[RMDB]
RNA sequence: GGGAACGACUCGAGUAGAGUCGAAAACCAUUAUUUCAGACUUAAAAACAAGCAUGUUUUCAAAUGGCACUAUGAGCUGCCAAUGAUGUAUCACCACCAUAUCUCAUUAUUCUCCAGUAAAUGUGAUUCGUCAAUAGUAGUUCGCUACUAUUGACGAAAAAGAAACAACAACAACAAC
Reactivity to 2A3 in 0.01 (KOAc 150mM, MgCl2 10mM, bicine 150mM(pH8.5), 24C), signal-to-noise 2, nucleotides 027 to 126: c020c000a040u160u070a180u050u120u120c070a050g100a140c020u100u120a000a060a040a060a040c030a050a050g080c070a080u070g020u050u060u100u070c040a060a090a080u070g010g000c010a000c020u100a100u290g080a050g060c030u020g000c010c010a010a030u020g000a000u000g010u030a070u070c000a000c000c000a010c010c050a020u000a030u050c050u010c020a000u010u110a050u150u030c040u040c050c000a060g060u180a040a080a120u110g040u070g100a150u000
Reactivity to DMS in 0.01 (KOAc 150mM, MgCl2 10mM, bicine 150mM(pH8.5), 24C), signal-to-noise 1, nucleotides 027 to 126: c010c010a070u010u020a070u020u000u000c070a120g000a080c110u020u000a050a060a080a070a110c050a060a100g000c080a130u000g000u000u000u000u000c080a040a110a130u030g010g000c000a030c050u000a120u030g030a090g020c170u000g000c010c020a040a080u000g020a050u000g020u030a010u000c030a000c040c060a060c010c010a020u010a010u000c030u000c060a080u000u020a160u020u000c030u000c010c070a180g010u030a010a110a110u000g030u010g000a110u010
Structure probing data (2A3 and DMS) for a 177-nucleotide construct. DMS adducts were read by reverse transcription with MarathonRT. It was measured as part of the RMDB library RFMREP. Values cover nucleotides 27 to 126. As a SHAPE reagent, 2A3 marks flexible, mostly unpaired nucleotides at the ribose 2'-OH.